[RMDB]
RNA sequence: GGGAACGACUCGAGUAGAGUCGAAAAACACACUAGACGAACAAUCUUUAACCGACAUAGCCCUGGUGCAGGACCACUUUGGGCGGAUCAGACGGAAGCUGAUGGAGGAUGGUGAGCUCGAGAAGGACUAAAUAGGCGACUUCGGUCGCCUAUUUAGAAAAGAAACAACAACAACAAC
Reactivity to 2A3 in 0.01 (KOAc 150mM, MgCl2 10mM, bicine 150mM(pH8.5), 24C), signal-to-noise 2, nucleotides 027 to 126: a010c010a010c010a000c040u130a070g120a020c050g050a100a060c110a230a050u030c000u040u190u070a150a090c040c030g050a110c130a140u110a050g000c000c000c010u010g000g000u050g010c150a130g010g260a050c060c030a050c020u160u180u120g000g010g030c030g010g020a020u020c000a000g050a040c050g050g020a070a010g020c010u030g020a010u060g000g060a040g060g000a020u030g020g000u040g000a020g010c000u020c060g090a050g000a050a060g000g040a010
Reactivity to DMS in 0.01 (KOAc 150mM, MgCl2 10mM, bicine 150mM(pH8.5), 24C), signal-to-noise 2, nucleotides 027 to 126: a130c080a100c080a050c060u000a130g020a090c020g000a130a080c100a120a070u040c000u030u000u010a130a030c010c010g000a070c030a110u000a160g000c020c000c010u020g010g050u000g000c110a100g010g000a170c170c030a010c030u000u010u020g000g000g000c020g030g030a060u000c130a030g000a130c030g030g030a090a080g000c030u000g000a080u000g000g020a090g000g000a020u000g000g000u020g000a080g000c040u000c000g000a080g000a040a090g000g010a290
The record gives the reactivity of an RNA of 177 nucleotides to 2A3 and DMS. Reactivities are given for positions 27 through 126. DMS adducts were read by reverse transcription with MarathonRT. The data come from the RNA Mapping Database (RMDB), library OK1LIB. The DMS profile rests on 2,158 reads. The RNA was probed in 150 mM KOAc, 10 mM MgCl2 and 150 mM bicine (pH 8.5) at 24 C.